RNA sequence: GGGAACGACUCGAGUAGAGUCGAAAAGUGUCGGACUCGCAAGUGCGAUUAUAUUUUAUCCCUAAACAGGGAGUGGAAAGCACGUCCUGGAGUGGAAAACACGUCCAUCCCAAAGCGAGAAAUGAAAAGGAAUUCCAAGAUUCGUCUUGGAAUUCCUAAAAGAAACAACAACAACAAC
Reactivity to 2A3 in 0.01 (KOAc 150mM, MgCl2 10mM, bicine 150mM(pH8.5), 24C), signal-to-noise 1, nucleotides 027 to 126: g080u090g100u080c030g050g020a020c010u000c010g040c030a140a000g010u000g120c000g040a010u180u000a070u000a040u010u170u080u070a030u000c000c000c000u120a250a300a000c050a050g000g000g000a010g040u010g070g040a060a130a000g010c000a000c010g090u130c000c060u000g020g020a020g000u060g040g050a110a160a000a020c020a000c040g170u000c000c010a010u040c000c010c040a000a040a000g040c060g010a010g100a080a130a030u100g010a050a090a010
Reactivity to DMS in 0.01 (KOAc 150mM, MgCl2 10mM, bicine 150mM(pH8.5), 24C), signal-to-noise 2, nucleotides 027 to 126: g040u000g030u000c040g000g030a210c000u000c050g000c040a290a070g000u000g010c000g010a090u020u010a090u000a080u010u010u000u000a090u010c000c000c000u010a130a110a120c230a040g000g010g000a070g010u010g000g000a080a080a270g000c010a020c000g020u010c030c070u010g020g010a060g030u000g010g000a040a030a110a240c240a040c160g040u000c000c030a020u000c010c000c000a020a100a130g000c010g010a020g000a060a070a110u000g010a020a030a070
Chemical mapping of a 177-nucleotide RNA with 2A3 and DMS. The data come from the RNA Mapping Database (RMDB), library M2PK90.